[RMDB]
Record summary: Conditions: 150 mM KOAc, 10 mM MgCl2 and 150 mM bicine (pH 8.5), 24 C. Structure probing data (DMS and 2A3) for a 207-nucleotide construct. The 2A3 profile rests on 5,586 reads. For DMS the reverse transcriptase was MarathonRT.

RNA sequence: GGGAACGACUCGAGUAGAGUCGAAAAAACAUUCCACUACCACUGGGGACUGUCACCAUCCUCUGCAUUGACUUGGGCACUGACAUGGUGAGUGUCACAACAGUCACAGAUCGAUAGUAGUGAGGUGUGAGCUGUGUCUUCAUUCACUGGCACUAUGCUAAGGCUACAAAUUCGUUUGUAGCCUUAGAAAAGAAACAACAACAACAAC
Reactivity to DMS in 0.01 (KOAc 150mM, MgCl2 10mM, bicine 150mM(pH8.5), 24C), signal-to-noise 4, nucleotides 027 to 156: a090a020c020a090u000u000c010c010a050c020u000a050c040c020a110c060u020g000g020g020g010a070c040u010g020u010c020a080c020c020a090u000c020c020u010c010u000g020c050a130u010u000g010a100c100u000u000g020g010g010c010a070c040u020g000a110c030a080u000g030g020u000g000a150g030u000g020u000c100a080c050a070a160c070a040g000u000c010a060c020a050g020a090u000c080g010a160u000a060g020u010a060g020u000g000a110g000g020u010g000u000g000a100g030c050u000g020u000g000u010c030u010u000c060a100u000u000c070a100c020u000g010g000c030a070c010u000a130u010g000
Reactivity to 2A3 in 0.01 (KOAc 150mM, MgCl2 10mM, bicine 150mM(pH8.5), 24C), signal-to-noise 6, nucleotides 027 to 156: a000a000c100a080u270u090c010c000a010c010u020a010c000c020a030c050u030g020g000g100g000a020c020u040g040u100c030a010c020c010a010u030c000c020u000c000u010g010c040a080u020u110g060a070c030u080u120g060g180g000c020a010c030u040g070a080c030a140u140g030g030u050g030a140g020u010g040u050c070a070c040a230a060c030a020g010u010c000a010c000a030g060a080u200c110g040a030u070a140g030u010a000g000u010g040a080g040g020u040g000u020g020a040g020c100u050g020u010g010u070c010u130u060c050a180u110u140c070a040c110u030g000g020c000a000c030u050a050u140g030